[RMDB]
RNA sequence: GGGAACGACUCGAGUAGAGUCGAAAAUGGUGUGAACAGGUUACCUGUGGUGCAGUGUAGUAGUGGAAAAAGCUGCAUCAUGUGUGACCUGCCCACACCGCAAAAUGUGGUACCUUCGGGUACCACAGACGUUAUAUCGCUUCGGCGAUAUAACGUCAAAAGAAACAACAACAACAAC
Reactivity to 2A3 in 0.01 (KOAc 150mM, MgCl2 10mM, bicine 150mM(pH8.5), 24C), signal-to-noise 1, nucleotides 027 to 126: u130g010g010u000g020u000g030a020a040c000a010g030g010u000u010a000c020c020u020g000u000g000g000u000g030c020a010g000u040g010u090a120g040u010a070g040u200g300g110a110a120a040a080a070g000c020u010g020c000a000u000c000a000u010g000u020g000u000g010a000c000c020u000g000c020c000c010a000c020a000c000c000g000c000a060a080a000a100u070g000u000g000g000u010a010c010c000u000u030c230g130g010g000u000a000c000c000a000c000a000